[RMDB]
About this RNA:
This 207-nucleotide RNA was probed chemically with 2A3. The RNA was probed in 150 mM KOAc, 10 mM MgCl2 and 150 mM bicine (pH 8.5) at 24 C. 2A3 adducts were read by reverse transcription with SuperScript II with manganese. Values cover nucleotides 27 to 156.

RNA sequence: GGGAACGACUCGAGUAGAGUCGAAAAACAUCGGUGUUCGCACCGAUGUAAAAAACCUUUGUGGGUGUUGUCAGCUGACCACGGGACCCAUUGGGUCCCUGGUUCAGCUUGGAUUUACACCCACUCUGGUAAAAAUCCCACAGUUCGCUGUGGGAAACGAGUAUUUCAGAUUCGUCUGAAAUACUCGAAAAGAAACAACAACAACAAC
Reactivity to 2A3 in 0.01 (KOAc 150mM, MgCl2 10mM, bicine 150mM(pH8.5), 24C), signal-to-noise 1, nucleotides 027 to 156: a000c010a010u010c010g000g000u040g060u080u090c210g020c130a000c020c000g000a000u000g000u010a010a010a010a010a010a010c000c010u000u000u000g020u000g000g000g000u010g000u000u010g010u020c000a000g000c000u000g010a020c020c030a070c160g020g000g000a000c080c000c080a300u180u300g010g000g010u000c000c000c010u000g000g000u050u050c000a000g000c000u000u030g000g000a010u150u070u170a010c000a000c000c000c000a000c010u000c000u000g000g010u050a040a060a000a090a110u050c000c040c000a000c000a000g080u120u140c160g010c110u000g000u010g000g000g000a070a020a070